An RNA of 207 nucleotides, treated with 2A3 and DMS and read out base by base.
The reactions ran in a buffer of 150 mM KOAc, 10 mM MgCl2 and 150 mM bicine (pH 8.5), at 24 C.
For DMS, 1,719 sequencing reads were counted.
For 2A3 the reverse transcriptase was SuperScript II with manganese.
[RMDB]
RNA sequence: GGGAACGACUCGAGUAGAGUCGAAAAAAUCACGACUGCUUCUGGGCUGCACACAGACAUGGGGAUACCCACAUAUAUCGCCUUAACUGUUGUAGACAUCUUUCAGCUGAUCCUGCAUGGAAACGGACAUGCCUGUGAUAAAUAUAAAUUACAGAGACAUAGUGCCAGGAUUCGUCCUGGCACUAUGAAAAGAAACAACAACAACAAC
Reactivity to 2A3 in 0.01 (KOAc 150mM, MgCl2 10mM, bicine 150mM(pH8.5), 24C), signal-to-noise 2, nucleotides 027 to 156: a000a000u150c080a060c090g110a040c000u070g000c010u090u040c050u070g000g030g020c020u010g000c010a000c000a000c010a040g020a050c020a100u100g000g000g000g000a000u010a020c000c080c000a050c070a050u190a020u040a000u030c040g200c040c000u070u050a040a010c010u000g030u070u030g020u000a010g060a050c010a090u050c070u070u070u050c050a020g010c020u040g000a050u030c010c000u030g020c020a050u010g000g020a060a180a160c080g110g040a010c040a020u050g000c000c000u010g040u020g040a040u010a090a150a020u240a040u040a090a140a040u140u030a030c010a000g050a000g020a030
Reactivity to DMS in 0.01 (KOAc 150mM, MgCl2 10mM, bicine 150mM(pH8.5), 24C), signal-to-noise 1, nucleotides 027 to 156: a090a040u010c040a100c010g000a180c100u000g010c010u030u010c010u030g000g030g030c010u000g000c000a100c010a060c030a110g000a010c130a120u000g000g010g000g000a110u000a010c010c010c110a120c150a100u000a260u000a040u010c010g030c010c000u000u010a090a150c040u000g000u000u030g030u020a080g000a110c030a080u010c010u010u000u010c030a040g000c050u000g000a160u010c020c030u000g000c020a050u000g010g000a100a090a070c030g000g000a090c050a000u000g000c040c010u040g020u030g010a090u000a080a010a120u000a130u000a040a030a040u000u010a060c010a130g000a210g020a260